[RMDB]
This 177-nucleotide RNA was probed chemically with DMS and 2A3. The DMS profile rests on 1,219 reads. The reactions ran in a buffer of 150 mM KOAc, 10 mM MgCl2 and 150 mM bicine (pH 8.5), at 24 C.

RNA sequence: GGGAACGACUCGAGUAGAGUCGAAAAUUGAACGAUGGACGUGUUUUCUUGGAUCCACUUAAAAAGCACGUGGCAUUCAAAAACAGGACAGUGAUUGGAUCCUUGGAUAUGCUUUGGACAGCCAAUGCUGUGAACUGAGGUUCGCCUCAGUUCACAGAAAAGAAACAACAACAACAAC
Reactivity to DMS in 0.01 (KOAc 150mM, MgCl2 10mM, bicine 150mM(pH8.5), 24C), signal-to-noise 2, nucleotides 027 to 126: u010u000g000a070a120c100g010a150u000g030g010a040c050g040u000g000u010u000u000u000c140u010u010g020g000a080u000c040c110a070c140u000u000a030a050a080a100a080g000c070a040c090g000u000g000g000c050a020u000u000c060a060a050a070a140a080c110a070g000g000a070c020a070g020u010g030a110u010u000g020g000a140u000c000c000u000u000g010g010a120u010a110u000g020c030u000u030u000g070g020a110c220a090g010c050c030a040a030u010g010
Reactivity to 2A3 in 0.01 (KOAc 150mM, MgCl2 10mM, bicine 150mM(pH8.5), 24C), signal-to-noise 1, nucleotides 027 to 126: u050u100g020a100a020c070g050a050u050g040g050a030c040g040u050g000u060u060u080u000c000u000u060g000g020a040u040c000c000a030c050u060u080a090a140a000a050a000g040c030a020c050g020u000g040g050c020a020u080u120c020a090a030a000a030a030c070a030g060g040a030c000a030g100u030g130a100u010u100g000g000a000u010c000c010u000u000g020g000a130u140a060u200g050c000u020u050u040g080g020a030c020a050g050c000c010a020a030u060g000